[RMDB]
RNA sequence: GGGAACGACUCGAGUAGAGUCGAAAAGCAAUGGAAAUUGAAGUUGAAGAUGGAAAUAAGGGUGCUCCUCAUCUGACCUUCAAAUAGGGGAAUUCUGAAUUAUCUCAUUAGGCUCAAUGCAGUCACAAGCAUCUUUAAAAAGGUAGGCAGAAGAGGACGCUUUUAAAAUGUUCGCAUUUUAAAAGCGAAAAGAAACAACAACAACAAC
Reactivity to DMS in 0.01 (KOAc 150mM, MgCl2 10mM, bicine 150mM(pH8.5), 24C), signal-to-noise 2, nucleotides 027 to 156: g030c060a040a070u000g010g000a040a070a090u000u000g030a020a140g010u010u000g020a060a100g010a050u010g020g010a070a090a120u010a060a100g000g040g040u010g010c070u000c020c020u020c010a050u010c080u010g000a120c090c040u000u000c060a050a030a120u010a080g010g010g010g000a030a110u000u010c080u020g010a060a060u030u000a090u010c010u000c030a130u000u000a120g020g030c050u000c060a050a130u000g030c070a030g000u020c040a120c120a040a100g020c040a090u000c040u000u000u010a010a060a080a060a070g010g010u010a020g050g030c020a080g040a060a080g010a020g020g000a160
Reactivity to 2A3 in 0.01 (KOAc 150mM, MgCl2 10mM, bicine 150mM(pH8.5), 24C), signal-to-noise 4, nucleotides 027 to 156: g030c040a020a060u090g050g090a080a040a070u080u110g020a040a010g030u060u070g020a050a010g010a050u070g000g070a080a080a110u160a090a140g030g010g030u060g020c040u050c020c010u020c000a080u000c020u040g150a220c000c010u070u060c050a090a070a060u120a050g010g000g000g010a020a050u130u030c050u080g080a100a100u120u060a080u160c040u000c030a050u100u130a030g030g000c020u010c030a060a120u140g000c080a020g060u060c040a030c020a100a040g020c000a050u010c000u060u170u130a080a130a020a000a000g060g010u030a020g010g000c010a000g010a040a010g010a030g010g010a010